[RMDB]
RNA sequence: GGGAACGACUCGAGUAGAGUCGAAAAGGCGCAUCGCGAUUGCCGCCCACGACGGGUUGGCCCGCACCAUCCGGCCGGCACACACCCCCUUGGAUGGCGACACGGUUUUCGCGCUGGCCACCGGCGCGUGACACGGGGAUUUCGAUCCCCGUGUCACAAAAGAAACAACAACAACAAC
Reactivity to DMS in 0.01 (KOAc 150mM, MgCl2 10mM, bicine 150mM(pH8.5), 24C), signal-to-noise 2, nucleotides 027 to 126: g010g000c030g020c070a060u000c080g020c080g000a100u000u010g020c020c020g000c020c000c010a150c220g040a140c110g000g030g020u010u000g040g010c010c110c080g000c080a090c040c030a060u000c050c030g010g030c030c060g010g000c090a050c080a080c150a270c050c050c000c000c040u010u000g010g000a060u000g000g010c030g030a120c100a070c050g000g000u000u020u000u000c030g020c000g010c030u010g000g000c030c030a080c050c030g010g030c050g040c130